[RMDB]
RNA sequence: GGGAACGACUCGAGUAGAGUCGAAAAAGUCACCUAUUACGAUAGGUGACAUUUGAACCAGCGAACAAUUCAGUUGCGAGAUUCAAGGUUUCAGUCUGAAUCAUAGUAGCCAUUACGAUGGCUACAACUCACUCCCGACUGUUCGCAGUCGGGAGAACGGAUAUAUCCGGUUCGCCGGAUAUAUCCGAAAAGAAACAACAACAACAAC
Reactivity to 2A3 in 0.01 (KOAc 150mM, MgCl2 10mM, bicine 150mM(pH8.5), 24C), signal-to-noise 2, nucleotides 027 to 156: a000g000u000c000a010c000c010u010a000u010u120a110c250g000a010u000a010g020g030u000g000a000c010a000u010u010u060g020a000a030c040c000a020g060c080g060a030a010c040a100a150u050u040c030a030g010u040u100g050c040g030a040g000a030u050u000c070a100a050g030g000u040u160u150c030a100g110u080c050u050g000a020a010u030c120a110u050a170g000u000a010g000c000c000a010u070u060a070c210g120a030u010g000g000c000u000a000c000a000a000c030u080c040a110c000u000c000c010c020g000a000c000u010g070u160u110c180g000c120a000g010u000c000g010g000g000a000g000a000a000